RNA sequence: GGGAACGACUCGAGUAGAGUCGAAAACGAAUUUACAACGGUUCGCCGUUGUAAAUUCGAACAUUUAAAUACAAUCCUUGUUAAGGUUCAACGUGCGGUGAAUAACGUCUUCGGACGUUAUUCACCGGGCUUAGAUACCGUUCGCGGUAUCUAAGCCAAAAGAAACAACAACAACAAC
Reactivity to DMS in 0.01 (KOAc 150mM, MgCl2 10mM, bicine 150mM(pH8.5), 24C), signal-to-noise 1, nucleotides 027 to 126: c020g010a030a010u010u000u000a040c010a020a000c020g000g010u000u010c300g030c000c010g040u000u000g010u000a000a000a000u000u000c000g010a030a090c160a130u020u000u010a050a080a100u000a110c140a070a060u000c020c020u000u000g020u000u010a110a070g000g010u010u020c140a020a040c170g020u000g010c020g030g010u000g020a000a020u010a010a020c000g000u000c010u010u040c260g010g000a000c010g020u010u000a000u000u000c000a000c000c000g020
Notes:
An RNA of 177 nucleotides, treated with DMS and read out base by base. The DMS profile rests on 943 reads. Reactivities are given for positions 27 through 126. The RNA was probed in 150 mM KOAc, 10 mM MgCl2 and 150 mM bicine (pH 8.5) at 24 C.